[RMDB]
RNA sequence: GGGAACGACUCGAGUAGAGUCGAAAAGAGAAGUUUGAGAUUCGGCCCCCCUUCUCCCAGCUGGUGCUGCUUCUCGAGAGACUGUUGGGCGAAGGUUACAAAAAGGUAUGUUGAGGCAGGGUAGGGGUGGAGCACGGAGAGCUCUGGUGCAGAAGUCAUCCGUAGGAUUAUUCGUAAUCCUACGGAUAAAAGAAACAACAACAACAAC
Reactivity to 2A3 in 0.01 (KOAc 150mM, MgCl2 10mM, bicine 150mM(pH8.5), 24C), signal-to-noise 2, nucleotides 027 to 156: g070a000g040a040a040g030u210u270u270g080a120g010a120u090u080c050g050g000c030c020c030c010c000c000u010u010c000u000c000c000c000a010g000c000u090g000g020u130g040c000u010g080c000u130u060c050u090c150g070a080g000a010g000a020c000u010g000u040u010g000g000g000c000g000a000a000g040g000u030u120a030c040a010a020a000a020a000g100g020u070a050u130g070u090u070g060a020g030g030c060a010g070g000g050u060a040g050g030g010g000u040g000g020a010g020c030a030c120g020g000a050g000a000g000c010u000c030u090g040g000u020g040c040a010g130a070a100g080u300c010
Reactivity to DMS in 0.01 (KOAc 150mM, MgCl2 10mM, bicine 150mM(pH8.5), 24C), signal-to-noise 2, nucleotides 027 to 156: g000a210g000a070a110g010u000u020u000g010a130g000a220u000u000c040g030g010c030c010c060c020c030c020u010u000c010u000c010c010c010a150g060c000u010g030g020u020g000c040u010g010c080u000u010c060u010c050g000a170g010a090g010a040c020u010g020u000u010g000g010g040c050g000a050a040g000g000u000u030a090c070a040a060a060a100a110g010g020u000a050u010g020u000u000g000a090g010g030c060a090g000g000g020u000a050g000g000g020g020u010g000g010a060g000c030a080c120g000g000a150g000a080g000c030u000c040u000g030g050u010g070c040a090g000a100a110g000u000c110